The data come from the RNA Mapping Database (RMDB), library TTRINS. The record gives the reactivity of an RNA of 177 nucleotides to DMS. The RNA was probed in 150 mM KOAc, 10 mM MgCl2 and 150 mM bicine (pH 8.5) at 24 C.
RNA sequence: GGGAACGACUCGAGUAGAGUCGAAAAGAUAUGGAAUGGUGUCCAAUUCGGCCGAAGAACUAUGUAACAUGUACUCGGAAACGAGUACCGCCCAUAGGGAGGCUUCGUUGGACACCAUUCCUAAGUCGCAUAACAGUAACUUCGGUUACUGUUAUGCAAAAGAAACAACAACAACAAC
Reactivity to DMS in 0.01 (KOAc 150mM, MgCl2 10mM, bicine 150mM(pH8.5), 24C), signal-to-noise 3, nucleotides 027 to 126: g000a100u000a300u000g000g010a010a010u000g010g010u000g030u000c010c010a010a030u000u010c290g020g000c000c000g010a110a150g010a170a220c020u000a010u000g010u010a110a160c120a160u010g020u000a000c000u000c010g020g000a060a120a270c000g010a000g000u000a010c000c240g000c240c190c000a040u010a010g000g020g010a110g040g020c000u010u000c170g010u010u010g000g000a030c000a000c000c000a000u000u000c000c000u000a010a060g040u010c120